[RMDB]
RNA sequence: GGGAACGACUCGAGUAGAGUCGAAAAGAUAUGGACUGAGAGAGGUGCCUAAGACAGAAUCUCGGAAACGAGAUUUCGAGGAACUACACUGGUUCAGUCCUAAGUCAAACGAGUGUUCGCACUCGAACCUACUCUAAGGCUUCGGCCUUAGAGUAGGAAAAGAAACAACAACAACAAC
Reactivity to 2A3 in 0.01 (KOAc 150mM, MgCl2 10mM, bicine 150mM(pH8.5), 24C), signal-to-noise 1, nucleotides 027 to 126: g010a000u000a000u110g000g020a000c010u030g000a010g010a040g050a100g000g070u080g040c020c060u120a170a030g130a020c030a030g100a010a030u000c010u000c010g030g000a010a020a030c010g020a010g010a000u030u040u060c000g010a030g000g040a080a010c110u270a060c260a040c100u080g000g100u100u040c010a010g000u000c000c000u010a060a020g050u020c110a130a000a150c050g000a000g020u020g000u030u180c290g060c080a010c010u010c000g000a060a010
Reactivity to DMS in 0.01 (KOAc 150mM, MgCl2 10mM, bicine 150mM(pH8.5), 24C), signal-to-noise 2, nucleotides 027 to 126: g000a010u000a300u010g000g010a020c000u000g000a060g010a110g000a160g000g010u000g010c030c000u020a170a110g010a090c300a110g020a030a000u000c000u000c000g010g000a030a080a120c000g000a010g000a020u000u000u000c050g030a120g000g010a090a050c090u020a160c070a020c030u000g000g010u010u000c000a000g000u000c000c000u000a090a060g000u000c060a040a130a080c020g000a010g000u010g000u010u020c210g010c020a040c000u010c000g000a060a130